[RMDB]
RNA sequence: GGGAACGACUCGAGUAGAGUCGAAAAUGGACGGGCUCUUGUGCGGGACCACUGUCCCCAUUCACCUAAAUGCUACUCAGUCUGAUAUGGACGUCGCGCACGGCAAAAGAUGGGAUAUUGAGCUCCCAUCAUACACUUCUAAAUUGUCGGGAACGACCUCUUGCCACCAGUUCGCUGGUGGCAAGAGAAAAGAAACAACAACAACAAC
Reactivity to 2A3 in 0.01 (KOAc 150mM, MgCl2 10mM, bicine 150mM(pH8.5), 24C), signal-to-noise 1, nucleotides 027 to 156: u130g000g000a000c020g000g000g000c010u000c020u130u100g070u100g000c140g020g020g020a090c000c080a170c300u200g000u050c020c010c010c000a070u140u130c090a160c000c070u110a090a060a030u100g070c010u010a010c000u000c010a070g010u070c000u010g070a060u010a020u300g030g020a030c010g030u000c000g000c000g000c000a070c010g040g000c030a020a020a020a020g000a020u060g000g000g000a010u010a070u120u110g030a070g080c020u000c000c000c000a000u000c000a000u030a000c110a070c000u190u140c060u120a070a220a110u060u020g000u000c000g020g000g030a060a030c030g020a020c020